[RMDB]
RNA sequence: GGGAACGACUCGAGUAGAGUCGAAAACCGCUACUCUUCGGAGUAGCGGAUACAUCUCGGGUCCGGGCCUUACCGUAGGACCAACGCUAAGGCCAGAGAUGAAGGGAGAGAUUUUCGAAUCUCUCAAAAUAAUUGGAUCAUUCGUGAUCCAAUUAUUAAAAGAAACAACAACAACAAC
Reactivity to 2A3 in 0.01 (KOAc 150mM, MgCl2 10mM, bicine 150mM(pH8.5), 24C), signal-to-noise 4, nucleotides 027 to 126: c010c000g000c000u010a010c000u020c010u030u100c280g120g000a000g000u010a000g000c010g010g000a000u010a020c010a010u000c010u010c000g060g040g060u010c020c010g030g010g000c000c000u010u010a030c040c000g010u020a050g110g230a090c040c040a010a000c010g000c010u020a010a010g010g000c000c020a030g000a000g000a020u040g040a090a070g180g100g000a000g000a000g000a020u020u010u050u100c150g050a080a010u000c010u000c000u000c000a030a040
Reactivity to DMS in 0.01 (KOAc 150mM, MgCl2 10mM, bicine 150mM(pH8.5), 24C), signal-to-noise 8, nucleotides 027 to 126: c000c000g010c000u000a000c000u000c000u000u010c180g020g000a020g010u000a000g010c000g000g000a030u000a080c030a010u000c000u000c000g000g010g010u010c040c050g010g000g000c000c000u000u000a010c180c020g000u000a060g010g010a100c170c120a040a020c010g010c190u000a010a010g000g010c000c000a080g000a020g010a020u000g010a200a130g010g010g000a010g010a020g000a010u000u000u000u020c150g010a030a010u000c000u000c000u000c000a040a050